This 177-nucleotide RNA was probed chemically with 2A3 and DMS. It was measured as part of the RMDB library OK1LIB.
[RMDB]
RNA sequence: GGGAACGACUCGAGUAGAGUCGAAAAGGACGCCGUGUUUGGUGUGGGGACGAAACCACAUGCUUCCGGCCCGGUGUCAAGCGUACGACACGAUCGAGUGAGGGUGGACUCGACAGGUCCUCCAUACGCCGGUUGGUUCGUUCGCGAGCUAACCGGCAAAAGAAACAACAACAACAAC
Reactivity to 2A3 in 0.01 (KOAc 150mM, MgCl2 10mM, bicine 150mM(pH8.5), 24C), signal-to-noise 7, nucleotides 027 to 126: g060g000a010c020g000c010c000g020u030g050u010u110u250g080g000u030g010u020g010g010g000g070a130c110g180a090a030a000c000c000a010c010a020u090g080c040u120u010c010c010g000g000c000c010c000g000g000u010g000u000c020a020a020g060c020g040u050a010c000g000a000c000a000c030g010a050u010c010g010a000g010u030g010a080g000g000g040u030g010g000a000c000u010c060g050a020c030a030g000g020u000c000c000u000c010c000a030u050a050c040
Reactivity to DMS in 0.01 (KOAc 150mM, MgCl2 10mM, bicine 150mM(pH8.5), 24C), signal-to-noise 5, nucleotides 027 to 126: g000g010a030c010g030c000c010g000u020g000u000u000u030g030g000u010g000u000g000g000g000g010a160c210g000a150a100a160c010c000a010c020a040u020g010c100u010u020c060c060g000g000c010c010c010g030g010u000g000u000c020a040a090g010c110g000u020a130c040g000a020c010a040c020g010a150u010c010g010a060g000u000g020a100g000g010g000u010g000g010a030c010u010c040g000a110c260a130g000g010u000c010c000u000c010c000a110u010a050c190
The 2A3 profile rests on 21,834 reads.
As a SHAPE reagent, 2A3 marks flexible, mostly unpaired nucleotides at the ribose 2'-OH.
Reactivities are given for positions 27 through 126.
The RNA was probed in 150 mM KOAc, 10 mM MgCl2 and 150 mM bicine (pH 8.5) at 24 C.
DMS adducts were read by reverse transcription with MarathonRT.